The record gives the reactivity of an RNA of 177 nucleotides to 2A3 and DMS. Values cover nucleotides 27 to 126. The reactions ran in a buffer of 150 mM KOAc, 10 mM MgCl2 and 150 mM bicine (pH 8.5), at 24 C. Source: RMDB library OK2TRN, as collected in RNAgym. For DMS the reverse transcriptase was MarathonRT.
RNA sequence: GGGAACGACUCGAGUAGAGUCGAAAAGGACUGCAUGGGACUACAGGCACCCGCCACCAUGUCCGGCUAAUUUUUGUAUUUUUAGUAGAGACAAGGUUUCACCAUGUUGGCCAGGAUGGUCCCUAUAGAGAUAUUUAAAUUUCGAUUUAAAUAUCUCAAAAGAAACAACAACAACAAC
Reactivity to 2A3 in 0.01 (KOAc 150mM, MgCl2 10mM, bicine 150mM(pH8.5), 24C), signal-to-noise 2, nucleotides 027 to 126: g000g010a010c010u010g000c020a010u020g000g000g060a050c060u110a100c160a080g040g000c000a090c030c070c110g000c010c000a000c000c000a020u010g010u000c000c010g060g000c030u010a020a050u060u070u050u140u270g130u070a260u060u100u000u000u020a010g000u010a040g040a030g010a130c010a020a040g010g000u050u170u170c070a090c040c000a000u000g010u010u040g050g000c010c010a070g090g020a060u080g050g050u000c000c000c000u010a060u070a060
Reactivity to DMS in 0.01 (KOAc 150mM, MgCl2 10mM, bicine 150mM(pH8.5), 24C), signal-to-noise 3, nucleotides 027 to 126: g000g010a060c020u000g000c040a060u000g010g010g000a100c130u000a050c190a080g020g010c030a120c150c180c180g020c010c010a100c010c010a070u010g000u000c010c030g020g030c010u000a000a000u000u000u000u030u000g000u000a040u000u000u000u000u000a020g010u000a110g010a130g000a010c030a040a060g000g010u000u010u010c070a120c020c000a040u000g010u000u000g040g000c010c030a090g020g010a110u000g000g000u000c000c010c000u000a150u020a220